[RMDB]
The data come from the RNA Mapping Database (RMDB), library M2RFPK. An RNA of 207 nucleotides, treated with 2A3 and DMS and read out base by base. 2A3 adducts were read by reverse transcription with SuperScript II with manganese. The reactions ran in a buffer of 150 mM KOAc, 10 mM MgCl2 and 150 mM bicine (pH 8.5), at 24 C.

RNA sequence: GGGAACGACUCGAGUAGAGUCGAAAAAAGCAUGCCGGGGAAUGGUGGUUUACCCCGUUAUCUAAUGAUUACCGACCAAUAAUUGGCGAAACUCGUUUCGCGUUGGCUGCCUAAUUCAAGGAAUUAGAAUAGCUCUCCGGGUUCGCCCGGAGAGCAACAUUGCUCUCAAGUUCGCUUGAGAGCAAUGAAAAGAAACAACAACAACAAC
Reactivity to 2A3 in 0.01 (KOAc 150mM, MgCl2 10mM, bicine 150mM(pH8.5), 24C), signal-to-noise 1, nucleotides 027 to 156: a000a010g090c040a030u040g020c020c010g000g000g000g010a020a050u040g020g000u000g080g000u050u040u160a170c000c000c000c000g060u110u020a080u050c070u030a010a070u090g090a040u110u010a100c070c010g020a050c010c030a030a000u110a160a110u160u040g080g020c020g000a020a010a030c030u060c070g070u010u000u010c000g000c020g050u010u010g000g050c040u020g010c010c000u010a030a010u040u030c060a220a050g100g020a060a060u020u020a040g050a160a060u010a040g040c030u010c000u000c010c000g000g000g050u040u010c090g100c020c000c060g030g010a000g000a000g000c000a000a000
Reactivity to DMS in 0.01 (KOAc 150mM, MgCl2 10mM, bicine 150mM(pH8.5), 24C), signal-to-noise 1, nucleotides 027 to 156: a070a060g030c040a060u000g000c140c000g020g020g010g010a050a090u000g000g010u000g010g000u000u000u000a200c000c020c000c020g000u010u010a010u010c070u000a100a190u000g020a100u000u000a080c040c000g020a050c000c030a090a080u010a050a240u000u030g050g020c000g000a110a000a040c010u000c140g030u000u000u000c020g050c050g000u000u020g000g000c040u000g010c050c030u000a030a030u000u000c040a150a210g030g010a060a110u000u000a070g000a100a170u010a080g000c030u000c000u000c030c000g020g000g050u000u010c280g020c010c000c000g000g000a000g000a010g000c000a000a080
The DMS profile rests on 2,193 reads.